Chemical mapping of a 207-nucleotide RNA with 2A3. High 2A3 reactivity points to a flexible backbone, as in loops and unpaired stretches.

RNA sequence: GGGAACGACUCGAGUAGAGUCGAAAACAUACAGCAUCUUUCUCUGUUGCUCAAGCUGGAGUGCAGUGGUGCAAUCACAGCUCACUGUAGCCUUGAUCUCUUGGGCUCAAGCAAGCGUCCCACCUCAGCCUCCUGAGUAGCUGGGCCCACAGACGUAGACGAGGACUAAUUUCGAUUAGUCCUCGUCAAAAGAAACAACAACAACAAC
Reactivity to 2A3 in 0.01 (KOAc 150mM, MgCl2 10mM, bicine 150mM(pH8.5), 24C), signal-to-noise 1, nucleotides 027 to 156: c040a030u240a000c050a080g020c010a060u010c090u100u280u100c080u020c030u070g040u000u070g030c000u000c020a030a000g000c110u100g090g000a000g000u050g000c030a000g000u000g060g090u100g080c120a170a080u130c070a100c010a110g090c010u000c020a010c000u010g160u140a010g000c020c070u060u150g040a100u030c010u000c020u110u000g000g040g000c010u000c010a000a070g000c000a000a020g040c030g160u070c040c010c000a040c030c010u000c000a000g020c080c000u120c010c010u000g020a000g000u180a050g020c000u010g000g000g000c060c020c000a020c030a020g040a010c090g020u020a050